[RMDB]
RNA sequence: GGGAACGACUCGAGUAGAGUCGAAAAGGUCCGAGGUUCGCCUCGGACCAAAGAAAGCACGAAUAAAUUAAUAAAUAGAGGUAAACGUGCAACCUCAUAAAAAAACGGAGAGGUUCGCCUCUCCGAACAGGUUAUGUUAGUUCGCUAACAUAACCUGAAAAGAAACAACAACAACAAC
Reactivity to 2A3 in 0.01 (KOAc 150mM, MgCl2 10mM, bicine 150mM(pH8.5), 24C), signal-to-noise 1, nucleotides 027 to 126: g030g000u000c000c010g000a020g070g000u050u070c190g070c000c000u000c010g000g070a010c000c000a020a000a000g010a000a000a000g000c000a000c000g020a020a110u190a200a070a060u250u120a000a130u190a220a080a160u290a220g000a010g000g020u050a150a160a030c030g000u010g000c000a010a010c000c010u000c020a000u110a000a070a020a000a000a010a020c000g010g000a000g010a000g000g080u030u060c120g080c030c000u000c000u010c010c000g000a000a000

The data come from the RNA Mapping Database (RMDB), library M2PK50. This 177-nucleotide RNA was probed chemically with 2A3. Values are in units of 0.01, from 0 to 300, in steps of 10. High 2A3 reactivity points to a flexible backbone, as in loops and unpaired stretches. Conditions: 150 mM KOAc, 10 mM MgCl2 and 150 mM bicine (pH 8.5), 24 C.